The data come from the RNA Mapping Database (RMDB), library TTRDES.
Chemical mapping of a 177-nucleotide RNA with 2A3 and DMS.
The reactions ran in a buffer of 150 mM KOAc, 10 mM MgCl2 and 150 mM bicine (pH 8.5), at 24 C.
2A3 adducts were read by reverse transcription with SuperScript II with manganese.
RNA sequence: GGGAACGACUCGAGUAGAGUCGAAAAAAAAAAGAUAUGGACAAGCUACCCACCCGAUGAACUACUCGGGGAGUAUCGGAAACGAUAUGAAAGACGAGCAUCGGAGGCUUGUCCUAAGUCAAAAAAACAUAUGUUAGUAGUUCGCUACUAACAUAUGAAAAGAAACAACAACAACAAC
Reactivity to 2A3 in 0.01 (KOAc 150mM, MgCl2 10mM, bicine 150mM(pH8.5), 24C), signal-to-noise 3, nucleotides 027 to 126: a000a000a010a000a030a010g160a090u280a090u240g000g020a000c000a010a010g030c010u090a220c020c010c030a010c010c000c020g020a010u010g020a090a060c070u160a030c020u300c010g030g040g010g030a040g010u000a010u000c000g010g050a140a050a030c030g000a000u010a000u050g180a150a100a000g260a050c010g000a000g020c010a010u010c010g000g000a010g010g000c000u000u010g000u000c000c000u000a020a000g030u060c060a050a090a040a050a140a010a090
Reactivity to DMS in 0.01 (KOAc 150mM, MgCl2 10mM, bicine 150mM(pH8.5), 24C), signal-to-noise 3, nucleotides 027 to 126: a000a030a060a060a060a110g020a060u010a160u000g010g000a010c010a020a010g010c010u000a150c020c000c030a300c070c000c010g000a020u000g000a050a060c060u020a260c050u000c000g040g000g000g000a300g010u000a000u000c000g010g000a060a060a130c000g010a000u000a000u000g000a130a140a160g020a070c040g000a000g010c010a030u000c020g010g000a090g010g000c000u000u000g000u000c010c010u000a010a050g010u030c100a010a010a070a080a060a080a160
DMS adducts were read by reverse transcription with MarathonRT.